[RMDB]
RNA sequence: GGGAACGACUCGAGUAGAGUCGAAAACAACAGGCUGGUUCCCGGAUGCGCUUUGCACGCCGUGCUGUUCGGGGACGAGAUCCAACGGUGAGCUAAGCAUGUAGUGCUGGGGAUGGAGUGCCUUCGGACGGCGGUUCAAUUCCGCCCACCUCCACCACAUCGCUUAUGCGUUCGCGCAUAAGCGAUGAAAAGAAACAACAACAACAAC
Reactivity to 2A3 in 0.01 (KOAc 150mM, MgCl2 10mM, bicine 150mM(pH8.5), 24C), signal-to-noise 1, nucleotides 027 to 156: c070a000a020c020a020g070g000c040u060g010g010u040u030c030c000c000g000g040a040u020g000c050g000c100u050u070u150g050c020a020c060g030c020c040g020u040g010c050u030g030u110u110c040g010g020g000g020a030c040g050a070g010a090u050c040c000a040a000c060g050g010u020g020a010g000c020u040a060a000g000c020a120u120g080u210a090g060u100g110c030u020g000g040g010g000a100u080g020g010a130g040u120g010c000c090u170u090c050g050g040a080c060g030g000c020g010g000u070u030c000a030a000u020u000c000c010g020c000c020c010a040c000c020u010c000c000a020c020c010a000